[RMDB]
RNA sequence: GGGAACGACUCGAGUAGAGUCGAAAAGAAAACGGCAGCAAGCCGAGCAAGUAGAGCAACGCGAGCAAGAUCAGCAACGCGAGCAACAUGAGCAACAUGAGCAAGAUCAGCAACAACAGCAAAAAAACCAUGGAUUACUGUUCGCAGUAAUCCAUGGAAAAGAAACAACAACAACAAC
Reactivity to 2A3 in 0.01 (KOAc 150mM, MgCl2 10mM, bicine 150mM(pH8.5), 24C), signal-to-noise 1, nucleotides 027 to 126: g010a000a210a010a060c000g030g020c010a050g060c050a280a000g030c030c030g010a000g000c010a060a030g010u130a010g030a000g020c020a080a100c010g000c020g020a000g020c010a100a000g000a190u120c050a000g050c020a050a130c040g000c060g000a020g020c000a010a060c000a070u120g020a000g010c010a000a040c020a130u110g000a020g050c010a000a020g000a080u050c010a020g040c020a010a000c000a040a000c010a030g120c080a050a050a050a000a000a000a050
Reactivity to DMS in 0.01 (KOAc 150mM, MgCl2 10mM, bicine 150mM(pH8.5), 24C), signal-to-noise 1, nucleotides 027 to 126: g020a120a030a080a100c050g000g020c030a060g020c060a120a050g020c100c060g000a050g020c090a030a150g000u000a000g000a160g020c030a120a040c190g000c070g050a170g000c050a030a020g000a050u010c120a050g050c000a030a080c040g000c040g060a080g010c020a050a050c050a020u000g000a110g020c060a070a020c060a100u000g020a090g050c030a010a030g030a060u000c000a010g000c030a070a020c030a000a010c060a030g000c060a000a020a010a070a060a010a090